[RMDB]
Structure probing data (DMS and 2A3) for a 177-nucleotide construct. For DMS, 5,614 sequencing reads were counted. The RNA was probed in 150 mM KOAc, 10 mM MgCl2 and 150 mM bicine (pH 8.5) at 24 C. It was measured as part of the RMDB library TTRINS. DMS adducts were read by reverse transcription with MarathonRT.
RNA sequence: GGGAACGACUCGAGUAGAGUCGAAAAGAUAUGGACGGUGAACUACUUGGUAAGAGCCGAAGAACAGUGUUAAUUUCGGAAACGAAAUUAACACUGGGAGGCUCGAAACAAGCACCGUCCUAAGUCACUUUCAUUAUCUGUUCGCAGAUAAUGAAAGAAAAGAAACAACAACAACAAC
Reactivity to DMS in 0.01 (KOAc 150mM, MgCl2 10mM, bicine 150mM(pH8.5), 24C), signal-to-noise 5, nucleotides 027 to 126: g010a040u000a300u020g000g010a020c010g000g010u000g010a080a070c120u040a300c000u000u000g010g000u000a150a300g010a020g020c000c010g000a100a120g010a180a250c010a000g000u000g010u000u000a010a010u000u000u010c010g000g000a090a060a180c010g000a000a010a000u000u000a000a000c000a000c000u000g000g000g000a170g010g030c000u000c000g000a070a100a090c020a010a010g000c010a010c010c000g020u000c010c000u000a000a060g010u000c040a290
Reactivity to 2A3 in 0.01 (KOAc 150mM, MgCl2 10mM, bicine 150mM(pH8.5), 24C), signal-to-noise 2, nucleotides 027 to 126: g020a030u080a060u110g000g000a000c000g000g010u030g030a140a090c110u240a040c010u300u000g000g020u070a080a050g020a010g010c030c040g130a210a040g120a160a040c000a000g000u010g000u010u000a000a010u000u000u010c000g020g010a070a070a040c000g000a000a000a000u000u000a000a010c000a000c010u000g000g000g000a010g000g040c000u010c000g000a000a040a000c000a000a000g000c000a000c000c010g000u000c000c000u000a000a000g000u010c000a030